[RMDB]
RNA sequence: GGGAACGACUCGAGUAGAGUCGAAAAACACCAGCAUAUGAUGUGAGUGCAUUCCGUGAUCUGAAACCUUUACCAUUCUUUUAUUAUUCUACUACACCAUGUGAAGUGCAUGGUAAUGGUAGUAUGACCGGGCGCAGCUUCGGCUGCGCCAAAAGAAACAACAACAACAAC
Reactivity to DMS in 0.01 (KOAc 150mM, MgCl2 10mM, bicine 150mM(pH8.5), 24C), signal-to-noise 3, nucleotides 027 to 129: a080c110a050c030c010a110g010c070a070u050a050u060g030a010u150g020u010g010a060g030u050g000c170a100u000u050c100c050g050u000g060a060u050c010u000g000a060a050a120c000c040u010u000u000a140c010c110a120u060u090c040u010u050u030u050a060u080u000a000u090u000c000u040a100c000u030a040c120a050c020c040a010u080g000u010g000a070a130g030u090g000c080a000u050g020g000u010a030a090u070g070g010u080a050g010u000a020u030g000a030c180c060g010
Reactivity to 2A3 in 0.01 (KOAc 150mM, MgCl2 10mM, bicine 150mM(pH8.5), 24C), signal-to-noise 3, nucleotides 027 to 129: a010c070a080c010c010a000g000c060a000u020a070u090g150a040u080g050u030g050a030g000u000g010c050a000u090u000c060c030g040u090g030a160u000c000u000g030a000a010a030c010c030u070u090u090a090c070c000a070u050u080c010u000u060u130u100a080u050u050a110u020u080c000u000a030c010u000a010c000a000c030c000a000u030g030u000g110a170a110g080u080g050c000a010u000g000g000u000a010a000u000g000g030u010a010g030u010a030u050g100a020c000c050g000